[RMDB]
RNA sequence: GGGAACGACUCGAGUAGAGUCGAAAAGGUCGUCUUUUCGAAGACGACCACUGUCCUUCCCAAAACUUUUCGAAACAUGUCGAAAGACAUGCUGAAACAGAAUUGGUGUGUGUUUCGACACACACAACCUAGUGUAUCUAUUCGUAGAUACACUAGGAAAAGAAACAACAACAACAAC
Reactivity to DMS in 0.01 (KOAc 150mM, MgCl2 10mM, bicine 150mM(pH8.5), 24C), signal-to-noise 9, nucleotides 027 to 126: g010g010u000c000g020u000c000u000u000u000u020c180g020a020a010g010a010c000g010a000c000c000a000c060u000g010u000c050c060u000u000c010c000c000a100a060a090a200c090u000u000u000u000c010g010a170a100a130c010a000u000g010u000c000g000a120a090a170g000a010c000a000u000g010c050u010g000a060a040a060c270a080g000a080a100u010u010g010g010u000g020u000g020u000g000u000u000u010c170g000a060c010a000c000a000c010a010c020a070a130
Reactivity to 2A3 in 0.01 (KOAc 150mM, MgCl2 10mM, bicine 150mM(pH8.5), 24C), signal-to-noise 9, nucleotides 027 to 126: g010g000u000c000g000u000c010u030u060u030u120c230g120a010a000g000a000c000g000a000c000c000a000c000u040g040u050c010c000u000u030c010c000c000a030a080a090a120c080u100u090u050u050c040g060a060a060a050c010a010u010g000u010c000g030a080a030a020g010a000c000a000u010g000c020u070g040a050a050a020c090a070g160a170a170u190u200g090g000u010g010u000g000u000g020u010u070u100c240g030a010c000a000c000a000c000a000c010a010a010